[RMDB]
RNA sequence: GGGAACGACUCGAGUAGAGUCGAAAAUUGUGGUCAAGACCUUGGCGUAGUAUCCAAGGUUGUCAAGGUACCUAUUGACUUAACAAUGAUUGAGUUUAUGUUAUGGUGUAAGGAUGGACAGGGGAAAACGUUGAUCGUUCUUCGGAACGAUCAACGUAAAAGAAACAACAACAACAAC
Reactivity to DMS in 0.01 (KOAc 150mM, MgCl2 10mM, bicine 150mM(pH8.5), 24C), signal-to-noise 1, nucleotides 027 to 126: u000u020g030u010g020g020u010c020a010a040g000a030c000c000u000u000g030g000c140g010u010a140g010u000a090u010c120c040a020a010g000g030u000u010g030u010c060a070a070g010g000u010a050c110c100u000a050u000u000g000a020c000u000u000a130a020c020a030a120u000g000a120u000u010g010a080g010u010u000u010a080u000g020u010u000a040u000g000g000u000g010u000a020a040g000g000a150u000g010g010a060c080a080g000g020g030g010a070a020a110
An RNA of 177 nucleotides, treated with DMS and read out base by base.
For DMS, 1,128 sequencing reads were counted.
Source: RMDB library M2PK90, as collected in RNAgym.